Conditions: 150 mM KOAc, 10 mM MgCl2 and 150 mM bicine (pH 8.5), 24 C. An RNA of 177 nucleotides, treated with 2A3 and DMS and read out base by base. The DMS profile rests on 2,796 reads.
[RMDB]
RNA sequence: GGGAACGACUCGAGUAGAGUCGAAAAUCGACAUUCUGGGUGAUGACGCUGACCUCAGCAUGGUCCUGCCAGGCGGCGAUCGCGCGAUGCCCGUCGUUGGGUUCGACGUUGGCCACCAGAUAAUGGCCAAUUGCAGCCCAUUCGUGGGCUGCAAUUGAAAAGAAACAACAACAACAAC
Reactivity to 2A3 in 0.01 (KOAc 150mM, MgCl2 10mM, bicine 150mM(pH8.5), 24C), signal-to-noise 1, nucleotides 027 to 126: u100c020g020a010c000a060u080u100c020u070g000g000g100u040g040a100u100g110a060c030g010c080u050g130a270c030c000u030c010a010g040c000a120u130g080g040u040c000c010u030g070c000c000a050g010g020c010g040g000c010g090a090u000c030g040c010g070c050g110a020u130g100c040c040c040g060u080c020g050u090u120g050g010g000u090u030c050g040a050c020g030u000u060g000g000c000c010a000c010c000a060g050a120u130a160a040u140g000g020c020
Reactivity to DMS in 0.01 (KOAc 150mM, MgCl2 10mM, bicine 150mM(pH8.5), 24C), signal-to-noise 3, nucleotides 027 to 126: u010c130g000a110c060a080u000u000c030u000g010g000g020u000g000a120u020g000a120c110g000c040u000g000a130c230c040u000c060a050g000c030a100u000g010g000u020c070c060u010g000c010c090a080g010g020c020g030g000c030g000a060u000c040g020c100g020c050g010a050u020g010c020c010c000g010u000c130g010u000u000g000g000g010u010u000c030g010a100c070g010u000u010g030g010c000c020a040c030c010a160g010a140u010a080a140u010g000g000c040

Source: RMDB library OK2TRN, as collected in RNAgym.